[RMDB]
RNA sequence: GGGAACGACUCGAGUAGAGUCGAAAAGUAUGGAUGCCACCGUGACGGCUCAAUCACACAAGUGCCAACGAUAACGAGGCGCUCGCUAUUGCUGCGUACCUGACGGCCUGACGGUCUGACGUUACAAAAAACGAAAAGUGGUUCGCCACUUUUCGAAGUCCGUCACAAGGUUCGCCUUGUGACGGACAAAAGAAACAACAACAACAAC
Reactivity to 2A3 in 0.01 (KOAc 150mM, MgCl2 10mM, bicine 150mM(pH8.5), 24C), signal-to-noise 1, nucleotides 027 to 156: g110u070a100u190g020g070a030u030g080c120c000a000c000c050g070u060g050a070c120g000g020c070u110c140a080a080u070c000a110c000a000c040a140a070g000u000g110c020c000a070a020c020g110a050u070a100a050c010g000a000g230g060c030g080c070u000c010g000c000u030a030u110u220g040c060u020g000c070g020u010a100c000c050u090g040a000c000g010g050c000c020u120g020a060c070g020g000u030c040u080g030a040c020g090u070u260a030c070a020a020a010a010a010a010c020g000a050a010a000a020g000u000g010g010u060u040c100g020c120c000a000c000u030u000u000u000c000g000a000a000